[RMDB]
This 177-nucleotide RNA was probed chemically with 2A3 and DMS.
2A3 is a SHAPE reagent: it acylates the 2'-hydroxyl of flexible nucleotides of all four kinds.
For 2A3, 4,905 sequencing reads were counted.
Values cover nucleotides 27 to 126.
The RNA was probed in 150 mM KOAc, 10 mM MgCl2 and 150 mM bicine (pH 8.5) at 24 C.
RNA sequence: GGGAACGACUCGAGUAGAGUCGAAAAGAUAUGGACCAGGGUAAAGUUCGAAGAACUCGGAAACGAGGGAGAACAUACCUGGUCCUAAGUCAAAACGGGAAGGAGCUGUUCGCAGCUCCUUCCCGAAGAGUAUGGAUAUGUUCGCAUAUCCAUACUCAAAAGAAACAACAACAACAAC
Reactivity to 2A3 in 0.01 (KOAc 150mM, MgCl2 10mM, bicine 150mM(pH8.5), 24C), signal-to-noise 2, nucleotides 027 to 126: g010a010u070a030u110g000g000a000c000c010a000g060g000g060u270a300a300a250g030u140u000c040g170a300a070g010a090a050c010u010c000g010g030a030a020a030c000g000a010g010g040g020a040g010a010a010c010a010u060a060c000c000u010g000g020u000c000c000u000a000a010g010u030c010a010a000a050a080c030g010g000g000a000a010g010g000a010g000c040u050g030u210u170c300g000c220a000g000c000u000c010c010u000u000c000c000c000g000a010a000
Reactivity to DMS in 0.01 (KOAc 150mM, MgCl2 10mM, bicine 150mM(pH8.5), 24C), signal-to-noise 4, nucleotides 027 to 126: g000a040u010a300u000g000g000a010c000c010a010g010g000g010u000a120a170a100g010u000u000c000g000a100a190g000a110a160c000u000c000g000g000a100a090a200c020g010a020g000g000g000a080g010a010a000c000a100u000a070c000c000u000g000g000u000c000c000u010a000a080g000u000c040a070a050a110a160c010g000g000g010a000a010g000g000a020g020c000u000g010u000u010c210g010c010a000g000c000u000c000c010u000u000c000c000c000g000a000a010